Chemical mapping of a 177-nucleotide RNA with 2A3 and DMS. 2A3 adducts were read by reverse transcription with SuperScript II with manganese.
RNA sequence: GGGAACGACUCGAGUAGAGUCGAAAAGAGAUUCAAGAAAAAACAAAUAUGAGCUAGAAAACUGCUUACCCUAAAGAUUAACUCCAUAAACACUAUGACUGCCUUCAGAUGGAUAUUCGCAGUGAAGCCAUGAGUGGAUAUUCGUAUCCACUCAUGGAAAAGAAACAACAACAACAAC
Reactivity to 2A3 in 0.01 (KOAc 150mM, MgCl2 10mM, bicine 150mM(pH8.5), 24C), signal-to-noise 2, nucleotides 027 to 126: g050a000g020a000u110u090c100a120a110g220a190a230a010a030a000a020c090a070a170a020u230a140u160g020a030g010c000u090a040g120a300a140a040a040c050u010g000c020u070u070a090c030c000c000u090a150a120a000g020a000u020u080a000a010c020u000c060c000a100u130a070a080a010c080a030c070u060a070u150g080a110c030u040g030c000c060u070u090c000a010g030a250u000g030g020a000u030a040u090u040c050g020c010a000g030u030g080a050a000g040
Reactivity to DMS in 0.01 (KOAc 150mM, MgCl2 10mM, bicine 150mM(pH8.5), 24C), signal-to-noise 1, nucleotides 027 to 126: g020a090g010a110u010u000c110a090a000g050a000a090a070a150a070a110c070a040a070a100u000a070u020g000a020g010c050u070a110g020a090a040a110a110c070u000g000c030u000u010a110c070c000c020u030a030a150a060g000a030u000u020a060a110c130u000c010c060a070u000a040a090a110c070a020c050u000a060u030g000a020c050u000g010c020c070u010u000c100a050g000a080u000g010g020a080u000a030u000u000c110g020c040a010g030u000g000a060a050g010
Description: Conditions: 150 mM KOAc, 10 mM MgCl2 and 150 mM bicine (pH 8.5), 24 C.